Record summary:
Structure probing data (2A3 and DMS) for a 177-nucleotide construct. The data come from the RNA Mapping Database (RMDB), library OK2TRN. The RNA was probed in 150 mM KOAc, 10 mM MgCl2 and 150 mM bicine (pH 8.5) at 24 C. DMS (dimethyl sulfate) methylates the pairing face of unpaired adenines and cytosines.
RNA sequence: GGGAACGACUCGAGUAGAGUCGAAAAAGCGCCUGCGCAUCGGGUUCGUCGCCAUUCACCACGGCGUAGCUCGCGCCCAGCACGGCGGCCGUCUCGAGGACCGGAUCGAAUGAUCGUACGUCCACGCGUAAGAUGCAUGCUUCGGCAUGCAUCUUACAAAAGAAACAACAACAACAAC
Reactivity to 2A3 in 0.01 (KOAc 150mM, MgCl2 10mM, bicine 150mM(pH8.5), 24C), signal-to-noise 1, nucleotides 027 to 126: a000g080c070g000c070c050u060g000c020g020c030a090u220c110g050g000g010u040u000c000g010u020c000g000c030c010a090u100u150c100a040c120c010a080c040g010g000c000g010u000a060g030c020u020c010g000c000g010c020c030c010a030g050c010a020c080g010g000c070g030g050c060c000g060u000c000u010c030g060a190g030g000a040c070c100g090g030a020u020c020g080a210a230u300g020a080u040c020g080u180a080c030g040u110c000c010a040c040g100c010
Reactivity to DMS in 0.01 (KOAc 150mM, MgCl2 10mM, bicine 150mM(pH8.5), 24C), signal-to-noise 1, nucleotides 027 to 126: a100g010c120g010c160c000u000g030c050g030c100a250u010c090g000g010g030u000u000c080g020u010c040g000c010c010a150u000u000c230a080c120c110a190c170g010g000c000g000u010a030g010c110u000c080g000c090g000c020c070c060a120g010c000a040c050g010g040c000g010g000c010c060g000u010c020u000c020g000a150g000g000a050c030c050g030g000a040u000c020g010a110a140u010g000a020u000c000g000u010a110c120g000u000c020c000a160c150g000c150